[RMDB]
This 170-nucleotide RNA was probed chemically with 2A3 and DMS. 2A3 adducts were read by reverse transcription with SuperScript II with manganese.

RNA sequence: GGGAACGACUCGAGUAGAGUCGAAAACAAAGCCGCCCCCGGGCGCUCCCCUCGGAGGUCCACUGGGUGGGUUCACAUCCCCAACCCGCGGGCCGGCUGUUCUUCUUUCUCUUUCCUCGUCUUCCUCGCGCCGACGUGUUCGCACGUCGGAAAAGAAACAACAACAACAAC
Reactivity to 2A3 in 0.01 (KOAc 150mM, MgCl2 10mM, bicine 150mM(pH8.5), 24C), signal-to-noise 4, nucleotides 027 to 129: c020a000a150a010g010c020c010g020c010c000c000c010c000g030g000g030c070g160c020u020c000c000c000c040u050c040g060g010a040g010g060u050c020c010a050c150u150g010g010g010u070g000g020g000u110u130c090a080c010a140u110c000c000c000c000a070a180c020c000c010g000c070g000g020g020c080c000g020g000c010u020g010u040u030c020u030u010c000u020u100u000c030u000c000u030u040u020c010c010u000c020g000u020c000u040u000c000c000u020c020g060c020g000
Reactivity to DMS in 0.01 (KOAc 150mM, MgCl2 10mM, bicine 150mM(pH8.5), 24C), signal-to-noise 4, nucleotides 027 to 129: c050a040a080a050g040c030c000g040c120c020c000c030c090g020g010g020c000g060c000u030c000c010c000c010u010c050g010g030a090g000g000u040c000c010a010c080u070g030g000g020u010g020g020g040u030u060c100a140c100a060u070c060c020c020c050a080a130c000c070c030g040c280g000g000g000c050c000g010g090c080u010g000u010u010c030u010u030c050u010u040u020c030u000c040u020u030u010c070c030u040c080g030u040c060u020u000c020c000u010c020g040c080g010